An RNA of 207 nucleotides, treated with DMS and 2A3 and read out base by base. For DMS, 2,406 sequencing reads were counted. It was measured as part of the RMDB library PDB130.
RNA sequence: GGGAACGACUCGAGUAGAGUCGAAAAAACCAACCGGAUGUUCUCUGUUCCGGCGGCAGGGCAACCUGCUGCCAUGGGACGUCCAGCGAAUGAAUGAAAGUAAAACCAAUGCCUUCACCGGCAGUAACACUCAGAAGUGUUGAUUCAAUUCAUUCCGGACUAUGCGGAAGUUCGCUUCCGCAUAGUCAAAAGAAACAACAACAACAAC
Reactivity to DMS in 0.01 (KOAc 150mM, MgCl2 10mM, bicine 150mM(pH8.5), 24C), signal-to-noise 2, nucleotides 027 to 156: a080a070c000c020a110a090c050c000g020g030a020u000g010u010u000c010u000c040u020g030u020u010c090c090g010g030c000g040g000c020a020g000g020g000c300a120a150c010c000u000g000c000u010g030c020c000a050u030g010g000g000a020c020g030u010c000c010a050g050c050g040a170a080u000g010a040a020u000g000a070a050a150g030u000a050a050a050a060c030c020a030a110u000g000c010c100u000u000c170a170c140c130g000g070c010a090g020u000a050a040c040a080c020u010c040a260g000a050a090g010u000g020u000u000g000a050u000u000c000a080a240u000u000c000a020u000u010c040c080g010
Reactivity to 2A3 in 0.01 (KOAc 150mM, MgCl2 10mM, bicine 150mM(pH8.5), 24C), signal-to-noise 4, nucleotides 027 to 156: a000a000c040c010a030a020c090c030g010g000a010u010g030u160u000c040u000c010u050g140u230u110c080c070g010g010c000g010g000c000a000g000g000g010c040a080a080c020c000u000g000c000u000g000c000c000a050u060g000g000g000a000c000g000u010c000c000a020g050c040g040a010a020u010g010a010a010u030g030a090a010a050g090u180a060a090a040a020c060c040a060a090u040g010c000c000u100u130c040a050c100c020g000g000c000a010g000u020a020a010c010a010c010u090c110a140g060a300a030g180u020g010u030u020g020a060u040u050c070a080a090u010u020c000a020u000u020c010c010g050